[RMDB]
RNA sequence: GGGAACGACUCGAGUAGAGUCGAAAACGCACGUCGUUCGUUCGCGGACGAGCAGGUGCCAUAACCUCCAAAUGGUACCUGCGCGUGUUGUCAGCAAGGUCUAAGCUGAUAACACUAUGCUAACGACUGAAGCAUAUUGGAUUACGGGCCAAGGGCAGGAUAUAUACAUGUUCGCAUGUAUAUAUCCAAAAGAAACAACAACAACAAC
Reactivity to DMS in 0.01 (KOAc 150mM, MgCl2 10mM, bicine 150mM(pH8.5), 24C), signal-to-noise 4, nucleotides 027 to 156: c060g010c070a120c070g000u000c020g000u010u000c030g010u000u000c180g020c050g010g000a150c040g030a060g010c020a020g020g020u000g000c000c000a030u010a070a070c070c040u010c250c080a110a170a030u000g010g020u000a000c010c000u000g020c000g000c050g000u000g010u010u000g020u000c000a010g020c000a080a150g020g020u010c100u000a120a270g010c020u010g010a040u000a020a000c000a030c030u000a030u000g010c040u000a050a080c030g020a080c060u000g010a100a100g020c040a100u010a090u010u010g000g020a170u010u000a080c070g040g000g030c000c030a050a110g000g030g030c060a150
Reactivity to 2A3 in 0.01 (KOAc 150mM, MgCl2 10mM, bicine 150mM(pH8.5), 24C), signal-to-noise 9, nucleotides 027 to 156: c060g020c020a060c070g080u060c010g020u080u020c010g010u030u040c070g010c030g040g030a030c030g010a030g000c000a000g010g000u000g010c000c000a020u040a110a150c010c050u070c050c060a090a110a030u010g000g000u010a010c000c000u000g000c000g000c020g000u010g000u010u010g010u000c000a000g000c030a100a120g130g050u090c090u200a130a030g000c000u000g000a000u000a000a000c000a000c020u030a030u090g000c010u020a030a020c030g000a020c040u100g040a060a020g030c040a040u050a100u110u100g000g020a020u070u110a100c090g030g030g000c010c020a060a060g050g030g010c050a060
Source: RMDB library PDB130, as collected in RNAgym. Chemical mapping of a 207-nucleotide RNA with DMS and 2A3. Values cover nucleotides 27 to 156. DMS adducts were read by reverse transcription with MarathonRT.